An RNA of 207 nucleotides, treated with 2A3 and read out base by base. Source: RMDB library OK3TST, as collected in RNAgym. The reactions ran in a buffer of 150 mM KOAc, 10 mM MgCl2 and 150 mM bicine (pH 8.5), at 24 C. Values are in units of 0.01, from 0 to 300, in steps of 10.
RNA sequence: GGGAACGACUCGAGUAGAGUCGAAAAGUAUGAGUGAUUCCAAAGUGGUGAUCAAUUAAAAACUGAAGUAUGAUUAGCAUUAAUUAUAACCCAAUGGGAAUAUGAUAAACGACUCUUGGUCAGCAAGCAGAGGGUGCCCUGUAGUGCUAAAGCAUCAGUCUAGUCAUGGGUUCGCCCAUGACUAGACAAAAGAAACAACAACAACAAC
Reactivity to 2A3 in 0.01 (KOAc 150mM, MgCl2 10mM, bicine 150mM(pH8.5), 24C), signal-to-noise 1, nucleotides 027 to 156: g080u080a060u080g010a030g030u030g060a150u050u210c000c000a140a070a000g060u100g040g130u010g100a010u070c080a180a100u220u290a260a000a000a000a000c010u010g030a010a000g030u100a000u030g000a030u030u000a000g000c000a000u220u000a150a040u090u020a140u060a070a000c170c000c000a120a030u110g000g040g010a000a000u190a070u140g070a030u100a080a250a000c100g010a100c040u110c000u040u140g110g040u100c020a030g060c110a260a000g030c000a000g010a010g020g000g000u060g000c010c010c010u010g010u140a180g060u070g050c000u050a000a170a000g000c000a000u170c040a030